[RMDB]
RNA sequence: GGGAACGACUCGAGUAGAGUCGAAAACCUUAGUUCGCUAAGGAAAGAUACCUUUGUGGCUUCUACCCACCCUGCUUGUCAGUCUCUCCCAUUGGGAGAGGGAGCUUGGAUUUAGCAGGAGGAAGCCACUCUGGUCAACGUCUGACUUCGGUCAGAAGUCUAUAUUUCCUUUCGAGGAAAUAUAGACAAAAGAAACAACAACAACAAC
Reactivity to DMS in 0.01 (KOAc 150mM, MgCl2 10mM, bicine 150mM(pH8.5), 24C), signal-to-noise 3, nucleotides 027 to 156: c000c000u000u020a050g020u000u000c250g060c010u010a050a080g020g010a060a080a140g000a300u000a030c010c000u000u000u000g020u000g030g010c010u000u000c020u000a120c020c000c010a300c160c010c000u000g000c010u000u000g020u000c020a180g010u000c000u000c000u020c000c000c000a300u000u020g040g020g010a070g000a020g010g000g010a100g030c130u010u020g030g010a100u000u000u010a030g020c010a050g000g000a260g000g000a040a030g000c010c020a000c020u000c020u030g020g020u010c030a090a070c040g030u010c000u000g010a040c010u000u000c300g040g000u000c000a010g010a050a120
Reactivity to 2A3 in 0.01 (KOAc 150mM, MgCl2 10mM, bicine 150mM(pH8.5), 24C), signal-to-noise 9, nucleotides 027 to 156: c000c000u000u010a020g010u040u060c270g010c140u010a010a010g020g070a090a120a030g100a110u250a080c000c000u010u000u010g010u000g010g000c000u010u000c010u080a240c030c040c020a040c020c000c000u000g000c000u030u010g020u030c010a040g250u110c010u000c000u000c000c040c050a300u200u300g010g000g000a010g000a000g010g010g010a110g020c060u150u210g140g020a070u290u300u160a000g000c000a000g000g000a010g020g000a000a000g000c000c000a000c000u010c000u000g000g010u040c050a100a060c070g090u000c000u000g000a000c000u020u050c180g070g000u000c000a010g010a050a030
This 207-nucleotide RNA was probed chemically with DMS and 2A3. The RNA was probed in 150 mM KOAc, 10 mM MgCl2 and 150 mM bicine (pH 8.5) at 24 C. Reactivities are rounded to 0.1 and cut off at 0 and 3. For DMS the reverse transcriptase was MarathonRT.